Chemical mapping of a 207-nucleotide RNA with 2A3 and DMS. For 2A3, 7,584 sequencing reads were counted.

[RMDB]
RNA sequence: GGGAACGACUCGAGUAGAGUCGAAAACAGAGGCCAAAGAAGCCCAGAUGGUCCAGGCCACAGAAGGCAGCUGUGCAGGCACAGGCCAGAGUGACUAGAAGUAGAGAGCACAUCUGGAUGGGCAAGGGAGAACAGCCAGCACCAGAGGCUUUCCCCAUCAUUAUAAGAUGUUCGCAUCUUAUAAUGAAAAAGAAACAACAACAACAAC
Reactivity to 2A3 in 0.01 (KOAc 150mM, MgCl2 10mM, bicine 150mM(pH8.5), 24C), signal-to-noise 6, nucleotides 027 to 156: c030a010g090a070g080g000c020c020a050a070a080g110a130a040g020c020c010c010a040g040a140u070g020g010u010c020c050a040g020g040c030c020a040c010a050g180a150a050g030g020c030a060g040c040u040g020u080g070c060a120g040g050c030a030c020a040g060g040c010c010a000g000a000g000u030g030a100c030u090a050g050a180a010g100u230a080g050a020g010a010g150c030a020c000a130u000c010u020g020g020a070u030g050g020g000c050a080a080g090g010g000a160g020a040a020c020a030g020c020c000a010g030c030a050c040c030a030g030a040g060g000c000u010u010u010c010c000c000c000a020
Reactivity to DMS in 0.01 (KOAc 150mM, MgCl2 10mM, bicine 150mM(pH8.5), 24C), signal-to-noise 3, nucleotides 027 to 156: c080a130g000a150g030g010c010c020a050a120a150g000a110a160g000c020c000c020a090g020a130u010g010g030u000c010c050a150g000g000c020c010a120c060a080g010a110a250g000g010c030a090g020c020u000g010u000g000c010a110g030g000c030a050c060a060g010g000c010c020a020g030a130g040u010g000a100c020u000a070g010a080a120g020u000a140g020a140g000a090g010c020a060c010a120u000c020u000g000g000a070u000g010g000g030c030a050a080g020g030g010a110g010a060a070c060a070g000c000c000a110g020c040a200c050c030a060g000a060g020g010c020u000u000u000c000c000c000c040a280
About this RNA:
Source: RMDB library OK3TST, as collected in RNAgym. Conditions: 150 mM KOAc, 10 mM MgCl2 and 150 mM bicine (pH 8.5), 24 C. The DMS profile rests on 6,777 reads.